Overview:
Chemical mapping of a 177-nucleotide RNA with 2A3 and DMS. Values are in units of 0.01, from 0 to 300, in steps of 10.
RNA sequence: GGGAACGACUCGAGUAGAGUCGAAAAGCGUUAAUCAUCCACCAGCAAUACACCACGGCCGUGAGGAGGUGACGCCCAAGGAGCCCGGCCUCGUCGAUGACGAUCACGUUGCUGCGGGUAAAGGCCGCGCCAUAAGGCUGUUCGCAGCCUUAUGGCGAAAAGAAACAACAACAACAAC
Reactivity to 2A3 in 0.01 (KOAc 150mM, MgCl2 10mM, bicine 150mM(pH8.5), 24C), signal-to-noise 1, nucleotides 027 to 126: g030c020g020u040u060a060a040u120c070a100u010c000c000a040c030c030a050g040c050a000a100u110a160c110a020c050c030a030c010g010g060c020c010g040u070g050a120g070g060a030g000g060u060g050a010c060g060c040c000c000a050a030g150g000a040g010c000c000c000g010g030c000c000u010c000g060u000c080g080a140u120g110a070c100g060a050u060c020a020c060g030u020u090g000c020u060g040c060g010g000g000u060a080a060a040g020g030c000c010g060
Reactivity to DMS in 0.01 (KOAc 150mM, MgCl2 10mM, bicine 150mM(pH8.5), 24C), signal-to-noise 1, nucleotides 027 to 126: g010c040g060u000u000a060a080u020c080a060u040c040c000a050c060c060a060g010c050a100a080u000a160c030a090c070c060a130c030g000g010c000c000g030u020g020a080g030g010a130g000g030u020g010a120c080g010c010c020c020a110a150g000g000a070g010c060c020c020g000g010c030c030u010c020g000u010c040g000a030u010g030a050c110g000a090u010c110a050c020g010u000u000g000c040u020g010c050g000g000g030u000a050a090a120g000g030c040c020g000
Annotation
The 2A3 profile rests on 1,201 reads.